[RMDB]
RNA sequence: GGGAACGACUCGAGUAGAGUCGAAAAAUCAGCUUGUACAGUUGCUAAUGCCAAUAUUCCUGUCAGAAGAACUUUCAAAUUAGUCUUGGGUCUUGCAUUAUUGGACAUUUAUCAUAACUCAGGAGUGACGGAUGUUAUCGUUCGCGAUAACAUCCGUAAAAGAAACAACAACAACAAC
Reactivity to 2A3 in 0.01 (KOAc 150mM, MgCl2 10mM, bicine 150mM(pH8.5), 24C), signal-to-noise 1, nucleotides 027 to 126: a030u200c000a040g070c030u050u280g040u150a020c020a130g030u020u000g010c000u000a010a070u130g020c000c010a010a000u020a040u060u080c040c020u020g150u090c070a030g020a190a010g030a120a050c000u000u190u050c180a170a190a250u070u040a040g010u000c070u000u020g020g050g060u000c000u000u000g010c010a010u000u100a060u110u230g010g010a090c020a020u000u080u060a020u100c020a030u040a060a020c050u010c040a030g110g000a030g010u070g010
Reactivity to DMS in 0.01 (KOAc 150mM, MgCl2 10mM, bicine 150mM(pH8.5), 24C), signal-to-noise 1, nucleotides 027 to 126: a080u000c060a090g010c030u000u010g000u000a100c140a060g030u000u000g000c060u020a030a100u000g000c040c050a070a040u000a090u000u000c010c020u010g010u010c070a080g010a070a040g000a090a050c090u000u000u000c130a070a050a090u010u000a070g010u000c010u000u020g000g000g040u000c040u000u000g000c090a060u000u010a090u000u000g000g000a080c080a010u000u000u000a090u010c010a070u000a070a090c020u000c030a050g000g010a110g090u000g000
An RNA of 177 nucleotides, treated with 2A3 and DMS and read out base by base. The RNA was probed in 150 mM KOAc, 10 mM MgCl2 and 150 mM bicine (pH 8.5) at 24 C. As a SHAPE reagent, 2A3 marks flexible, mostly unpaired nucleotides at the ribose 2'-OH. The DMS profile rests on 1,037 reads.